[RMDB]
RNA sequence: GGGAACGACUCGAGUAGAGUCGAAAAGGGGAGGCGGCGCGGCAGCAGCGACAGGCGUCGAGUGGAGGAGGCGGCGGCAGCAGCGGCCCGGGGGUGGCGGCGCAACGACACGCAGUGGCGAGCGCGACACCCAUUGAGAGUUCGCUCUCAAUGGGUGAAAAGAAACAACAACAACAAC
Reactivity to DMS in 0.01 (KOAc 150mM, MgCl2 10mM, bicine 150mM(pH8.5), 24C), signal-to-noise 9, nucleotides 027 to 126: g000g000g000g010a110g000g010c060g000g010c040g010c050g010g020c060a080g010c080a100g000c050g010a090c090a130g000g010c070g010u010c020g000a110g010u020g000g010a130g010g000a100g010g000c070g000g000c050g010g000c060a080g000c080a070g010c070g010g000c040c020c050g000g000g010g000g010u010g010g000c060g010g000c030g010c050a040a070c090g000a090c060a070c060g010c090a090g010u000g000g000c030g000a110g000c020g010c050g000a260
Reactivity to 2A3 in 0.01 (KOAc 150mM, MgCl2 10mM, bicine 150mM(pH8.5), 24C), signal-to-noise 9, nucleotides 027 to 126: g030g000g010g000a040g010g040c050g010g010c020g010c020g070g000c020a070g020c020a020g020c040g070a050c040a070g070g080c020g020u030c020g020a040g040u120g020g050a100g020g020a050g020g030c040g020g000c010g020g010c020a050g000c010a010g030c040g050g020c010c020c010g020g000g000g000g010u080g020g010c040g010g010c010g000c020a080a080c040g040a010c010a010c080g090c050a050g020u030g060g010c020g010a020g020c020g000c000g020a010